[RMDB]
Structure probing data (DMS and 2A3) for a 177-nucleotide construct. The data come from the RNA Mapping Database (RMDB), library OK2TRN. The 2A3 profile rests on 10,943 reads.
RNA sequence: GGGAACGACUCGAGUAGAGUCGAAAAGUGCGCAAGCGGCGCGACCUCGAGGCGGACGCGACGCAGCUAAACCCGCUGCACGUGCUGAUCGCCGCGCUGAUCGGGGCGGCGUUGUUCGUCGGCGUGAACUCAGUAAAUCGUUCGCGAUUUACUGAGUAAAAGAAACAACAACAACAAC
Reactivity to DMS in 0.01 (KOAc 150mM, MgCl2 10mM, bicine 150mM(pH8.5), 24C), signal-to-noise 6, nucleotides 027 to 126: g020u000g010c070g020c110a170a120g010c030g010g000c010g010c010g010a070c040c010u010c110g000a140g020g020c130g010g000a120c020g010c010g010a030c030g020c000a140g000c020u000a050a090a210c040c030c020g020c030u000g010c120a050c020g000u000g000c010u010g000a120u010c040g010c010c010g010c010g000c020u010g000a160u010c150g010g010g010g020c000g010g010c010g010u000u000g010u010u000c030g000u000c020g010g010c030g000u010g010a100
Reactivity to 2A3 in 0.01 (KOAc 150mM, MgCl2 10mM, bicine 150mM(pH8.5), 24C), signal-to-noise 5, nucleotides 027 to 126: g090u100g010c040g020c090a130a150g040c050g050g010c010g000c010g030a080c010c010u060c090g170a120g050g110c060g000g010a020c000g000c000g010a010c030g000c020a020g000c020u060a070a070a120c010c010c010g010c000u010g000c020a010c020g010u070g000c030u100g060a190u090c020g000c030c020g020c010g070c040u100g060a300u160c130g000g010g030g000c000g000g000c010g020u050u100g010u020u040c010g000u000c010g000g020c020g040u090g040a020